RNA sequence: GGGAACGACUCGAGUAGAGUCGAAAAUACUUGCGUCCAGUACAAACUCCAAUCCCAAAUGGAACACCUUAUCGUAGCCGUACUUCUGCCGGAGUUGAUUCCACUUGCCGAGACUGACGAGAUUGAUGACGGUGUUGUAGAUGCUUUGGACGGGGUCAACGAAUUUAAGGUUCGCCUUAAAUUCGUUAAAAGAAACAACAACAACAAC
Reactivity to 2A3 in 0.01 (KOAc 150mM, MgCl2 10mM, bicine 150mM(pH8.5), 24C), signal-to-noise 5, nucleotides 027 to 156: u120a010c020u030u060g160c010g010u020c010c000a030g040u070a040c070a080a100a050c050u020c040c010a040a110u080c010c000c010a020a060a090u090g010g010a020a010c020a020c020c020u080u110a060u110c030g090u090a040g080c040c010g080u110a120c090u050u060c020u080g090c040c030g040g000a040g020u040u100g070a150u120u020c020c010a030c010u030u090g010c030c030g030a030g040a130c090u110g020a030c040g020a010g050a230u100u170g020a040u060g030a050c120g030g040u020g000u030u010g000u010a030g020a100u070g040c000u110u060u090g010g010a010c020g000g000g000g020u030c040
Reactivity to DMS in 0.01 (KOAc 150mM, MgCl2 10mM, bicine 150mM(pH8.5), 24C), signal-to-noise 3, nucleotides 027 to 156: u000a050c030u010u020g000c050g000u000c030c020a110g020u000a130c060a060a060a070c020u000c010c010a040a200u000c020c010c010a080a090a200u000g000g000a070a100c030a080c020c020u010u000a080u000c060g030u000a130g030c020c050g010u000a070c060u000u000c090u000g030c080c030g000g010a210g030u000u030g010a170u000u000c010c010a070c050u000u000g010c040c060g020a150g000a070c050u010g020a120c030g000a060g010a120u000u000g000a060u000g000a160c060g030g000u000g000u000u000g020u000a050g030a190u000g030c040u000u000u000g010g020a050c060g000g020g040g030u010c040